[RMDB]
RNA sequence: GGGAACGACUCGAGUAGAGUCGAAAAGGCCAGAUUUCCUGGUCGGGUUGGCGUGAGGUGUGGUUGGAUCCCACGUUGGCGCCGUAGGCGAUGUUCCCCUUCCCCUCGGGCCACCAUGCGGCGAUGAGUGCUAACAAGGAUUCGUCCUUGUUAGCACAAAAGAAACAACAACAACAAC
Reactivity to 2A3 in 0.01 (KOAc 150mM, MgCl2 10mM, bicine 150mM(pH8.5), 24C), signal-to-noise 1, nucleotides 027 to 126: g030g010c000c010a020g050a140u200u130u150c030c030u000g010g040u030c110g000g050g000u070u220g040g000c110g040u030g030a090g030g010u070g000u050g050g000u070u070g100g070a080u040c000c030c000a010c050g020u010u050g070g020c030g000c030c000g050u050a030g050g090c140g050a060u160g010u010u060c020c010c000c000u000u100c000c000c000c000u020c030g010g020g000c040c010a010c000c010a020u100g000c050g030g000c000g010a070u120g020a000
Reactivity to DMS in 0.01 (KOAc 150mM, MgCl2 10mM, bicine 150mM(pH8.5), 24C), signal-to-noise 3, nucleotides 027 to 126: g020g010c000c000a020g010a300u000u000u010c140c000u000g010g030u000c000g000g010g000u000u000g020g010c040g010u010g010a050g000g020u000g020u000g020g000u010u010g000g000a150u000c050c010c010a060c040g000u010u000g010g000c020g030c010c040g020u000a060g000g000c090g010a090u000g010u000u000c000c010c000c110u000u000c030c000c010c050u000c080g000g010g000c040c020a100c090c050a090u010g000c040g010g000c010g010a100u010g000a180
An RNA of 177 nucleotides, treated with 2A3 and DMS and read out base by base. For DMS, 4,686 sequencing reads were counted. The reactions ran in a buffer of 150 mM KOAc, 10 mM MgCl2 and 150 mM bicine (pH 8.5), at 24 C. High DMS reactivity at an A or C suggests that its Watson-Crick edge is free. For DMS the reverse transcriptase was MarathonRT.